[RMDB]
RNA sequence: GGGAACGACUCGAGUAGAGUCGAAAAUCAGAAUCAGGCCGGAGUGUUUAGCGCUCCGUAAACACGGUCGUACGUCCAGCCGGUAGCCUGGUUCCUUGCAUUGAGUGAUGUACGGAGUUUAUAGAGCAAAAGAAAGACCUGUUCGCAGGUCUUUCAACACUAGGACUACCUUCGGGUAGUCCUAGUGAAAAGAAACAACAACAACAAC
Reactivity to DMS in 0.01 (KOAc 150mM, MgCl2 10mM, bicine 150mM(pH8.5), 24C), signal-to-noise 1, nucleotides 027 to 156: u000c050a020g000a090a040u010c000a020g030g050c020c050g000g020a090g050u000g020u010u000u010a130g030c060g000c010u020c000c010g040u000a030a050a120c060a090c040g040g000u010c020g000u000a020c090g010u000c040c000a160g000c030c030g050g030u000a070g000c020c020u010g020g050u000u000c000c020u000u000g000c090a110u000u010g000a200g020u000g010a080u000g050u000a050c010g020g000a200g020u000u010u000a060u000a110g000a130g000c050a060a080a080a130g000a040a040a030g000a020c000c000u020g030u000u000c290g040c000a010g000g000u000c000u010u000u000c000a040a170
Reactivity to 2A3 in 0.01 (KOAc 150mM, MgCl2 10mM, bicine 150mM(pH8.5), 24C), signal-to-noise 2, nucleotides 027 to 156: u120c000a000g020a000a000u010c000a010g000g000c010c010g000g030a020g010u080g060u100u300u220a110g080c010g000c010u000c010c010g000u020a010a050a000c120a020c090g030g040u070c040g010u080a030c040g040u000c010c000a030g000c010c020g030g010u020a000g000c000c000u010g000g000u000u000c020c010u050u100g000c000a080u020u170g060a030g070u190g070a060u030g020u010a020c060g020g000a050g000u020u100u010a110u090a050g080a010g040c040a070a030a140a020g010a000a000a000g000a000c000c000u000g020u030u050c220g010c080a000g000g000u000c010u000u000u000c000a000a000